[RMDB]
This 177-nucleotide RNA was probed chemically with DMS and 2A3. The data come from the RNA Mapping Database (RMDB), library OK2TST. For 2A3 the reverse transcriptase was SuperScript II with manganese. Values cover nucleotides 27 to 126.

RNA sequence: GGGAACGACUCGAGUAGAGUCGAAAAAGCGUGAGCCAGGGGCUCCAGCCGUAUUUGGUGGUGAGCAGCGCGGUGGUGUAGGCGCCCACGCCCAUGAAGGCCGCUUGCCCGAACGAGGUCAGGCCCGCCGACUGGUUAUGUUCGCAUAACCAGUCGGAAAAGAAACAACAACAACAAC
Reactivity to DMS in 0.01 (KOAc 150mM, MgCl2 10mM, bicine 150mM(pH8.5), 24C), signal-to-noise 1, nucleotides 027 to 126: a080g010c040g000u010g020a090g000c000c000a150g010g000g020g030c010u010c020c050a300g000c050c020g020u010a050u010u010u010g000g030u000g020g030u010g000a010g000c010a100g010c120g000c050g010g030u000g020g030u000g000u050a130g000g010c070g000c090c020c060a030c090g010c030c000c030a100u020g000a040a190g000g010c000c010g020c030u000u000g000c000c010c010g010a050a150c110g000a090g000g000u000c030a090g000g000c030c060c050g030
Reactivity to 2A3 in 0.01 (KOAc 150mM, MgCl2 10mM, bicine 150mM(pH8.5), 24C), signal-to-noise 1, nucleotides 027 to 126: a000g020c050g010u070g020a040g030c000c030a080g040g070g070g020c000u060c000c000a010g050c000c000g120u130a300u060u170u270g100g030u060g000g070u200g000a030g000c000a000g040c060g000c040g070g050u090g000g040u070g040u090a090g100g050c030g010c010c000c030a010c000g000c000c050c000a010u130g050a070a040g000g020c000c000g020c050u050u130g050c020c030c040g050a020a030c030g030a070g000g050u070c070a020g030g070c030c050c030g000